[RMDB]
RNA sequence: GGGAACGACUCGAGUAGAGUCGAAAAGGUUCUCCGUUCGCGGAGAACCAAAAUCCGAGCCGGUAGUCGCGCGGUUCAAUCCCUGGUGCGGGUGCUAGUGCACCGGCUCCGCACUAUCUAUAGGUUAUGAAAAAAGCUUUGUAGUUCGCUACAAAGCGUCCCUACGUGACUUCGGUCACGUAGGGACAAAAGAAACAACAACAACAAC
Reactivity to 2A3 in 0.01 (KOAc 150mM, MgCl2 10mM, bicine 150mM(pH8.5), 24C), signal-to-noise 1, nucleotides 027 to 156: g000g000u000u000c010u000c010c020g000u010u040c180g030c090g080g000a040g000a010a010c000c040a030a000a000a010u070c040c020g010a000g000c020c020g180g000u140a050g100u200c090g040c010g000c000g110g010u050u030c000a060a060u030c020c000c010u010g020g010u010g010c020g010g000g070u130g010c020u050a110g070u020g150c050a020c070c040g000g020c000u010c010c000g000c000a020c000u040a020u080c050u100a160u210a140g050g000u080u160a090u220g030a040a020a020a110a030a020g020c040u020u000u020g000u000a000g030u010u080c220g000c210u010a000c000a000a020a000g010c000
Annotation:
This 207-nucleotide RNA was probed chemically with 2A3. The 2A3 profile rests on 513 reads.